[RMDB]
Description: Structure probing data (DMS) for a 177-nucleotide construct. In probing experiments dimethyl sulfate is read out at A N1 and C N3, which are open when not base-paired. For DMS the reverse transcriptase was MarathonRT. The RNA was probed in 150 mM KOAc, 10 mM MgCl2 and 150 mM bicine (pH 8.5) at 24 C. The data come from the RNA Mapping Database (RMDB), library TTRDEL.
RNA sequence: GGGAACGACUCGAGUAGAGUCGAAAAGAUAUGGAGCCCUCCGAUAAGCUGCUGUCGGAAACGACAGGCAGCUUUUGACGGAGGGCUCCUAAGUCAAAACAAGUUGGUUGUUCGCAACCAACUUGAAGGGAAUAAAUGUGUUCGCACAUUUAUUCCCAAAAGAAACAACAACAACAAC
Reactivity to DMS in 0.01 (KOAc 150mM, MgCl2 10mM, bicine 150mM(pH8.5), 24C), signal-to-noise 2, nucleotides 027 to 126: g000a050u000a180u000g000g010a010g010c000c000c000u000c000c000g030a100u000a020a030g020c000u000g000c000u000g020u000c000g000g000a040a060a080c000g000a000c000a020g030g000c000a000g010c010u000u000u000u010g000a250c050g010g000a000g020g010g000c000u000c000c000u000a000a060g000u020c020a090a130a110a300c010a000a010g010u000u010g000g000u000u000g000u000u000c210g000c020a000a010c000c000a000a000c000u000u000g010a050a070